[RMDB]
RNA sequence: GGGAACGACUCGAGUAGAGUCGAAAAGUUUGCAUCAAAAGGAGUGCUCUGCAAACCUUAUACCUAAUAAAAAUCCUUUAUCAAGAAAGAAUGGAUCCUAUUGCACCAUAAAGCCUCCAUAUAGAAAGGAAUAAUAGAACUUCGGUUCUAUUAUUCCAAAAGAAACAACAACAACAAC
Reactivity to 2A3 in 0.01 (KOAc 150mM, MgCl2 10mM, bicine 150mM(pH8.5), 24C), signal-to-noise 1, nucleotides 027 to 126: g000u000u000u000g000c080a150u140c040a130a050a160a000g190g000a180g130u010g030c030u010c060u060g000c010a000a040a000c000c000u120u060a070u080a030c010c020u070a220a180u100a150a200a010a010a000u030c000c000u080u050u100a150u170c060a000a200g080a210a110a000g020a000a220u040g010g010a030u050c000c010u070a080u070u160g110c040a050c020c000a020u050a140a090a010g010c010c000u000c000c020a040u070a010u010a110g090a060a150a020
Reactivity to DMS in 0.01 (KOAc 150mM, MgCl2 10mM, bicine 150mM(pH8.5), 24C), signal-to-noise 1, nucleotides 027 to 126: g030u000u000u000g030c010a010u030c070a050a010a140a110g000g010a100g030u000g010c000u000c010u000g000c000a000a040a030c000c030u000u000a130u000a230c000c010u010a080a090u030a060a130a120a210a090u000c050c000u000u000u010a150u010c010a130a110g000a090a060a110g030a100a100u000g060g000a040u000c080c070u000a090u000u000g010c100a020c010c020a040u000a080a090a210g010c010c010u000c000c000a090u000a100u010a060g010a050a130a060